[RMDB]
RNA sequence: GGGAACGACUCGAGUAGAGUCGAAAACUCGGCAUACUUCUACCAGGCGGCCAGGCUCAAGGGUAUCGGAGAGUAUGUCAAUCUGCGAACUGGCAUGCCAUGCCACCUGCAUCCCACGUCCGCGCUACAUUAGUCAGCGUUUCGACGCUGACUAAUGAAAAGAAACAACAACAACAAC
Reactivity to 2A3 in 0.01 (KOAc 150mM, MgCl2 10mM, bicine 150mM(pH8.5), 24C), signal-to-noise 2, nucleotides 027 to 126: c010u000c030g000g000c010a020u020a090c040u120u110c020u070a220c060c000a040g000g080c010g010g020c050c040a030g080g000c060u060c080a090a070g070g030g000u130a110u210c050g030g020a040g010a000g070u050a030u060g070u050c000a030a120u050c060u120g050c020g030a060a030c030u010g020g000c040a040u060g050c030c000a050u120g000c000c000a030c000c000u070g000c010a040u080c000c020c000a040c010g000u000c040c000g030c020g040c110u080a040
Reactivity to DMS in 0.01 (KOAc 150mM, MgCl2 10mM, bicine 150mM(pH8.5), 24C), signal-to-noise 2, nucleotides 027 to 126: c050u000c010g000g070c010a050u000a060c030u000u000c040u000a110c090c040a160g010g000c090g020g020c020c070a120g030g020c080u010c090a130a140g020g000g000u010a080u000c110g000g000a100g000a050g020u000a010u000g020u000c040a050a090u010c080u000g010c060g010a040a070c070u000g010g010c080a050u000g020c040c080a140u010g000c000c000a060c060c030u000g020c050a080u020c060c000c000a080c150g010u010c030c030g020c080g000c100u000a110

Background: An RNA of 177 nucleotides, treated with 2A3 and DMS and read out base by base. The 2A3 profile rests on 2,307 reads.